An RNA of 207 nucleotides, treated with 2A3 and DMS and read out base by base.
The reactions ran in a buffer of 150 mM KOAc, 10 mM MgCl2 and 150 mM bicine (pH 8.5), at 24 C.
For DMS the reverse transcriptase was MarathonRT.
Reactivities are rounded to 0.1 and cut off at 0 and 3.
RNA sequence: GGGAACGACUCGAGUAGAGUCGAAAAUUGCUGAUUUGAAUACUAAACUACAAGCUACAGAAGGCAACGAGGACAUCAUUAAACAAUUACAAGCUGAUGUGGAGGCUUUCAAUCAGAAGGAAGCACAAGCACAAAAGGAUUUAGUGCUUAAUACUGCAUUAUCUCACCUCUUCGGAGGUGAGAUAAUAAAAGAAACAACAACAACAAC
Reactivity to 2A3 in 0.01 (KOAc 150mM, MgCl2 10mM, bicine 150mM(pH8.5), 24C), signal-to-noise 3, nucleotides 027 to 156: u080u070g010c020u050g020a170u130u120u140g020a030a020u140a160c090u160a070a110a110c030u150a080c060a070a000g020c000u020a050c030a100g080a100a040g030g000c020a050a020c030g050a050g010g020a040c020a030u120c020a010u080u180a100a130a050c040a080a070u190u150a080c020a060a040g010c020u030g040a030u030g010u030g020g050a020g010g030c000u000u070u000c030a020a080u050c000a000g070a090a020g070g010a020a000g020c040a010c020a040a030g000c030a000c020a040a190a070a040g060g020a000u030u110u230a050g000u010g010c000u000u040a080a000u080a080c070u080g050c010
Reactivity to DMS in 0.01 (KOAc 150mM, MgCl2 10mM, bicine 150mM(pH8.5), 24C), signal-to-noise 2, nucleotides 027 to 156: u010u020g030c040u000g010a140u000u020u060g010a100a200u000a120c070u000a050a110a110c000u000a060c060a110a150g010c010u000a170c020a120g010a130a080g000g020c000a050a070c020g030a110g000g000a080c070a040u000c020a050u010u000a070a080a070c020a080a070u000u000a100c080a080a160g030c060u000g000a080u000g020u010g040g010a110g000g000c040u000u020u010c000a030a020u000c110a110g000a110a130g030g010a030a010g000c030a050c120a030a040g000c010a050c070a110a020a170a090g020g000a120u000u000u000a050g040u000g010c020u010u010a020a130u000a050c030u040g040c070